An RNA of 177 nucleotides, treated with 2A3 and read out base by base. The reactions ran in a buffer of 150 mM KOAc, 10 mM MgCl2 and 150 mM bicine (pH 8.5), at 24 C. It was measured as part of the RMDB library OK1LIB.

RNA sequence: GGGAACGACUCGAGUAGAGUCGAAAAGAUGAAAAUAACCAACAAUGUGAUCUUGCUUGCGGAGGCAAACUUUGCACAGUAUAAAAUCUGCAAGUAGUGCUAUUGUUGGAAAGAAUACUGUGCAAAAAUCACCACCCGGAUUCGUCCGGGUGGUGAUAAAAGAAACAACAACAACAAC
Reactivity to 2A3 in 0.01 (KOAc 150mM, MgCl2 10mM, bicine 150mM(pH8.5), 24C), signal-to-noise 1, nucleotides 027 to 126: g070a050u020g150a050a140a000a000u270a130a000c010c000a000a000c000a000a000u230g120u020g300a300u020c000u020u140g000c010u000u000g000c060g000g000a000g000g050c140a190a110a000c060u000u000u050g000c030a060c000a000g080u050a010u020a160a080a000a130u100c000u000g070c000a000a050g000u000a110g090u010g160c000u000a000u000u000g010u000u050g000g140a000a010a000g100a010a010u050a000c050u000g000u010g000c070a000a000a000a000